[RMDB]
RNA sequence: GGGAACGACUCGAGUAGAGUCGAAAACGUUCGGGAAAAGGGGGACUCCGGGACUCCCUGCAGGCUGGGCACGAAGCCCCCACCGGGCGCUCCCCUCGGCGGGCCGUCCGUUGGGUUCACACCCCCAUCAUCUGGCACUUCGGUGCCAGAAAAAGAAACAACAACAACAAC
Reactivity to 2A3 in 0.01 (KOAc 150mM, MgCl2 10mM, bicine 150mM(pH8.5), 24C), signal-to-noise 3, nucleotides 027 to 129: c010g000u080u000c020g000g010g000a010a000a140a000g050g050g000g000g000a050c060u020c040c010g030g000g030a040c020u030c010c010c010u010g010c020a020g130g040c040u040g000g000g000c100a030c070g050a030a000g010c010c030c000c000c000a020c010c010g000g010g000c010g030c040u070c000c000c000c000u080c050g210g010c020g000g000g030c080c050g030u020c000c000g000u010u010g000g000g020u170u180c040a060c020a000c040c000c000c000c010a020u110c030a030
Reactivity to DMS in 0.01 (KOAc 150mM, MgCl2 10mM, bicine 150mM(pH8.5), 24C), signal-to-noise 6, nucleotides 027 to 129: c080g000u030u050c080g070g000g030a100a090a050a120g000g000g000g000g000a000c080u010c100c080g050g010g030a000c180u040c090c000c000u010g040c110a070g010g000c140u030g000g000g040c140a100c110g030a000a000g040c030c060c000c020c010a040c060c040g050g020g000c030g030c050u000c010c040c040c100u030c120g020g100c090g020g000g030c300c050g040u020c030c050g020u100u030g000g020g030u030u090c090a100c210a230c000c020c010c020c010a050u070c100a020